[RMDB]
RNA sequence: GGGAACGACUCGAGUAGAGUCGAAAAGCUUGUAGCUUCGGCUACAAGCAUCUAAAAUCAGCGGUAAAUAAUUACGAGGGGUUACCGCUGAACGCCUCGAUACAACCACAUCAUUCGUGAUGUGGAAGUAUACCUCUUUCUUCGGAAAGAGGUAUACAAAAGAAACAACAACAACAAC
Reactivity to DMS in 0.01 (KOAc 150mM, MgCl2 10mM, bicine 150mM(pH8.5), 24C), signal-to-noise 4, nucleotides 027 to 126: g000c000u000u000g000u000a010g010c010u000u020c220g020g010c000u000a000c000a000a010g000c010a000u000c080u000a100a080a090a140u000c000a000g000c010g000g000u000a010a010a110u010a070a080u010u010a120c130g010a050g020g010g020g010u010u000a010c010c000g010c010u000g000a000a060c180g010c030c000u010c100g010a190u010a080c190a130a180c000c000a010c000a000u000c000a050u010u020c210g010u000g010a020u000g020u000g000g000a000a040
Reactivity to 2A3 in 0.01 (KOAc 150mM, MgCl2 10mM, bicine 150mM(pH8.5), 24C), signal-to-noise 6, nucleotides 027 to 126: g000c010u010u010g010u010a000g000c010u030u040c280g110g000c000u000a000c000a010a000g000c000a010u020c020u070a080a100a030a140u030c000a000g020c010g020g020u030a050a070a110u190a160a240u300u250a150c130g030a090g000g020g010g010u010u010a010c000c000g000c010u000g000a000a010c010g070c000c020u030c030g020a020u040a220c050a060a070c030c000a010c000a000u000c000a010u020u140c190g100u040g000a000u010g010u000g000g000a010a000
An RNA of 177 nucleotides, treated with DMS and 2A3 and read out base by base. 2A3 is a SHAPE reagent: it acylates the 2'-hydroxyl of flexible nucleotides of all four kinds. The RNA was probed in 150 mM KOAc, 10 mM MgCl2 and 150 mM bicine (pH 8.5) at 24 C. For DMS, 3,239 sequencing reads were counted. Source: RMDB library M2PK50, as collected in RNAgym. 2A3 adducts were read by reverse transcription with SuperScript II with manganese.